[RMDB]
RNA sequence: GGGAACGACUCGAGUAGAGUCGAAAAGUUAAGUUGAAAAGACGGAGCCGCAGCGAAAGCGAGUCUGAAUAGGGCGAAUGAGUAAGUGGUCGUAGACCCGAAACCAUGUGAUCUACCCAUGUCCAGGAGGUGAACAGAGAUUCGUCUCUGUUCACCUAAAAGAAACAACAACAACAAC
Reactivity to DMS in 0.01 (KOAc 150mM, MgCl2 10mM, bicine 150mM(pH8.5), 24C), signal-to-noise 3, nucleotides 027 to 126: g010u020u020a050a170g010u010u000g000a100a060a110a070g000a050c040g020g020a090g000c030c030g000c100a040g020c100g010a070a100a100g010c040g010a060g020u010c030u020g020a060a090u000a160g000g000g010c040g000a080a020u010g000a060g000u010a070a090g030u020g010g000u000c050g020u010a040g010a100c030c000c030g020a080a100a100c080c050a030u000g000u010g000a060u000c060u000a090c050c000c020a070u000g000u000c040c050a150g010g010

This 177-nucleotide RNA was probed chemically with DMS. DMS adducts were read by reverse transcription with MarathonRT. Values cover nucleotides 27 to 126. Conditions: 150 mM KOAc, 10 mM MgCl2 and 150 mM bicine (pH 8.5), 24 C.